About this RNA: The record gives the reactivity of an RNA of 177 nucleotides to 2A3 and DMS. For DMS the reverse transcriptase was MarathonRT.

RNA sequence: GGGAACGACUCGAGUAGAGUCGAAAAGCUAGCAAGUGGUGCAGAUGCGCGCUAAGGCACCACAGCCACCGAUGACCUGUAAGGUGGCAAACAGGUCAGCUAAGAAAAGCGCGCACGCGAAAGCGGAAGCCUGAUAUUAGUUCGCUAAUAUCAGGCUAAAAGAAACAACAACAACAAC
Reactivity to 2A3 in 0.01 (KOAc 150mM, MgCl2 10mM, bicine 150mM(pH8.5), 24C), signal-to-noise 7, nucleotides 027 to 126: g060c040u070a010g080c090a250a020g000u010g000g000u000g000c000a000g010a070u110g010c000g000c000g000c000u040a030a020g050g000c000a000c000c000a000c010a010g010c000c010a030c020c010g110a110u110g030a050c000c000u030g040u050a070a030g050g020u020g040g000c000a010a010a000c030a010g040g050u070c010a010g020c040u100a130a010g090a130a130a020a010g000c000g030c000g000c000a000c000g040c000g030a100a030a010g000c010g010g030a040
Reactivity to DMS in 0.01 (KOAc 150mM, MgCl2 10mM, bicine 150mM(pH8.5), 24C), signal-to-noise 6, nucleotides 027 to 126: g010c060u010a090g010c070a140a090g010u010g000g010u010g010c000a030g010a080u010g050c010g010c000g010c010u020a220a290g000g000c010a010c010c000a000c000a120g020c010c030a150c050c020g000a200u020g000a060c010c030u000g000u010a140a170g000g000u010g000g000c010a020a070a060c130a030g000g000u000c010a060g000c080u030a130a160g010a070a090a070a060g000c000g000c000g020c000a020c010g010c000g000a070a080a160g000c010g000g000a130